[RMDB]
This 177-nucleotide RNA was probed chemically with DMS and 2A3.
The RNA was probed in 150 mM KOAc, 10 mM MgCl2 and 150 mM bicine (pH 8.5) at 24 C.
The DMS profile rests on 9,907 reads.
RNA sequence: GGGAACGACUCGAGUAGAGUCGAAAAGAUAUGGAGCCACUGACCUGAGCAUCGAUCUGACGUCGGAAACGACGUCAGGGAGCUCGGUUUGGCUCCUAAGUCAAAGAUUGUUCUUCGGAACAAUCAACCAAUACUCAAAGUUCGCUUUGAGUAUUGGAAAAGAAACAACAACAACAAC
Reactivity to DMS in 0.01 (KOAc 150mM, MgCl2 10mM, bicine 150mM(pH8.5), 24C), signal-to-noise 6, nucleotides 027 to 126: g000a010u000a050u000g000g010a030g020c010c000a070c300u010g000a050c030c020u030g020a010g030c000a300u000c240g000a010u020c000u000g000a020c000g010u000c000g010g000a020a020a040c000g020a010c000g000u000c000a000g000g010g000a000g060c010u000c010g000g010u000u010u000g020g020c000u000c000c000u000a000a040g000u000c000a150a170a120g000a010u000u000g000u000u000c000u000u010c250g000g000a020a010c000a010a010u000c010a140a210
Reactivity to 2A3 in 0.01 (KOAc 150mM, MgCl2 10mM, bicine 150mM(pH8.5), 24C), signal-to-noise 5, nucleotides 027 to 126: g000a000u020a010u070g000g000a000g010c010c030a050c140u120g130a100c030c140u220g020a000g000c010a040u300c020g000a000u000c000u000g000a000c000g000u000c000g020g000a000a010a010c000g010a000c000g010u000c000a000g000g000g000a000g000c010u000c010g000g000u050u030u040g000g000c000u000c000c000u000a000a000g000u000c000a000a050a130g010a000u010u010g000u020u000c010u050u110c300g090g000a010a000c000a000a000u000c000a000a030